[RMDB]
RNA sequence: GGGAACGACUCGAGUAGAGUCGAAAACUGAAAAAGUUCGCUUUUUCAGAAAAACCGUAGGUUCGAGGCCAGGGUGAUGACCAUCGGUUCGAAAGAGCCGAUGCAAGCCCAUUGGCUCGAACCUAAACGGAAAAAGCUAGCGAUUCGUCGCUAGCAAACAUCUACAUUAGUUCGCUAAUGUAGAUGUAAAAGAAACAACAACAACAAC
Reactivity to DMS in 0.01 (KOAc 150mM, MgCl2 10mM, bicine 150mM(pH8.5), 24C), signal-to-noise 3, nucleotides 027 to 156: c000u000g000a020a000a010a010a010g010u000u000c300g040c020u000u020u000u000u000c000a030g000a050a090a040a110a140c010c010g060u000a050g000g010u010u000c000g000a050g060g010c000c010a080g020g030g030u000g010a130u000g000a170c300c010a020u010c010g020g010u000u010c000g010a180a150a300g000a010g010c000c000g000a020u010g020c010a080a280g000c000c000c000a050u010u010g030g010c000u000c010g000a030a000c010c000u000a000a010a070c000g000g010a040a050a070a140a180g010c010u010a010g020c000g000a050u000u000c280g000u000c000g010c000u000a010g010c000a000a070
Reactivity to 2A3 in 0.01 (KOAc 150mM, MgCl2 10mM, bicine 150mM(pH8.5), 24C), signal-to-noise 5, nucleotides 027 to 156: c000u000g000a000a000a000a000a010g030u060u080c140g200c040u000u000u010u000u000c010a010g090a140a080a020a010a010c000c000g000u010a010g000g010u010u000c010g010a080g070g190c010c010a010g020g030g010u040g060a300u180g020a080c070c010a000u000c000g000g010u000u000c010g040a110a110a110g000a010g000c000c040g000a000u000g000c010a040a070g000c000c000c020a060u090u110g000g000c000u000c010g000a000a000c000c000u000a000a000a010c000g010g070a120a050a020a040a000g000c000u000a000g000c000g010a010u040u070c210g030u020c000g120c000u000a000g000c010a010a010